An RNA of 177 nucleotides, treated with 2A3 and DMS and read out base by base. The RNA was probed in 150 mM KOAc, 10 mM MgCl2 and 150 mM bicine (pH 8.5) at 24 C.
RNA sequence: GGGAACGACUCGAGUAGAGUCGAAAAAGCAGAGAAUGGUCAGCAGCUGUGCCCGUGCGCCAGGCCUUGGUAGGAAAGCUCCGCACAGGAGGAGGACUACCAUAGAGCAGCUGUCUGGUCUUGGGCAUACCGGUAAAUAGUUCGCUAUUUACCGGUAAAAAGAAACAACAACAACAAC
Reactivity to 2A3 in 0.01 (KOAc 150mM, MgCl2 10mM, bicine 150mM(pH8.5), 24C), signal-to-noise 5, nucleotides 027 to 126: a000g060c080a040g040a020g050a200a080u150g030g010u040c030a010g010c010a010g010c030u020g010u050g060c000c000c000g050u080g030c080g030c030c030a020g010g000c000c030u020u010g010g010u000a020g000g030a130a050a030g060c000u010c010c010g030c020a190c080a190g040g040a020g030g190a010g000g030a020c000u010a000c010c010a010u060a000g060a020g000c040a010g000c040u040g060u090c010u010g000g020u010c020u010u040g010g010g000c010a030
Reactivity to DMS in 0.01 (KOAc 150mM, MgCl2 10mM, bicine 150mM(pH8.5), 24C), signal-to-noise 9, nucleotides 027 to 126: a080g020c050a090g000a110g010a090a070u000g010g010u000c020a060g010c020a040g020c030u000g020u000g010c000c010c030g010u010g010c160g010c040c040a100g010g010c040c190u000u000g010g020u000a020g000g000a120a160a230g000c000u000c000c010g000c270a110c240a170g010g010a040g000g010a030g010g000a300c010u010a000c000c000a020u010a040g000a170g020c040a030g000c070u000g010u010c010u000g000g000u000c020u000u000g000g010g020c050a160